RNA sequence: GGGAACGACUCGAGUAGAGUCGAAAAUAAGAAGGCUGAGUCUGAUGAAGUAAGACUUUGCUGAUACAUUCCUCCUAGAAAAAAGGGUUGGAGAGAGCAGCCUUCACUGAAGAGUAUCACAGGGCUGACUCAUCAAUGAAUUCGUUCAUUGAUGAGUAAAAGAAACAACAACAACAAC
Reactivity to 2A3 in 0.01 (KOAc 150mM, MgCl2 10mM, bicine 150mM(pH8.5), 24C), signal-to-noise 7, nucleotides 027 to 126: u200a030a030g090a050a010g010g000c000u010g030a010g010u000c010u040g080a140u170g160a230a040g070u130a040a000g020a000c000u010u010u030g000c010u000g030a020u030a140c050a070u060u030c000c000u040c000c000u110a120g230a110a140a020a030a020a030g060g010g040u140u090g050g010a060g020a010g000a010g060c010a000g000c010c000u020u010c030a030c020u020g020a060a020g120a040g230u110a040u140c040a030c050a050g000g020g000c000u010g010
Reactivity to DMS in 0.01 (KOAc 150mM, MgCl2 10mM, bicine 150mM(pH8.5), 24C), signal-to-noise 9, nucleotides 027 to 126: u020a090a090g000a140a220g000g010c000u000g000a020g010u000c000u000g010a150u030g020a150a160g010u010a170a030g010a060c000u000u000u000g010c020u000g010a100u010a090c170a150u010u010c020c020u000c030c030u000a080g000a000a040a080a100a090a060g000g000g010u010u000g010g010a070g010a130g010a080g020c010a010g010c010c000u000u000c070a050c100u000g010a060a100g010a110g010u020a060u010c040a050c140a050g000g010g010c040u000g010